The record gives the reactivity of an RNA of 177 nucleotides to DMS.
The data come from the RNA Mapping Database (RMDB), library TTRDES.
[RMDB]
RNA sequence: GGGAACGACUCGAGUAGAGUCGAAAAAAAAAGAUAUGGAACGAUAAGUAGCAGCACCGAUGAAAGCACCUCGGAAACGAGGUGCUGGAGGUGCUGAACUACUACGAAACGUUCCUAAGUCAAAAAACCAUCUACUCAAGUUCGCUUGAGUAGAUGGAAAAGAAACAACAACAACAAC
Reactivity to DMS in 0.01 (KOAc 150mM, MgCl2 10mM, bicine 150mM(pH8.5), 24C), signal-to-noise 1, nucleotides 027 to 126: a040a030a030a200a200g020a000u000a040u000g000g000a010a000c010g010a070u000a120a220g020u010a000g000c000a000g000c000a000c000c020g040a090u010g000a170a130a020g000c000a000c000c000u000c000g000g000a000a000a030c000g020a010g000g000u000g000c000u000g010g000a000g040g030u000g010c000u000g020a000a000c010u000a300c010u000a000c020g000a110a140a090c000g010u000u010c000c000u010a020a100g010u010c000a000a040a120a090a050a130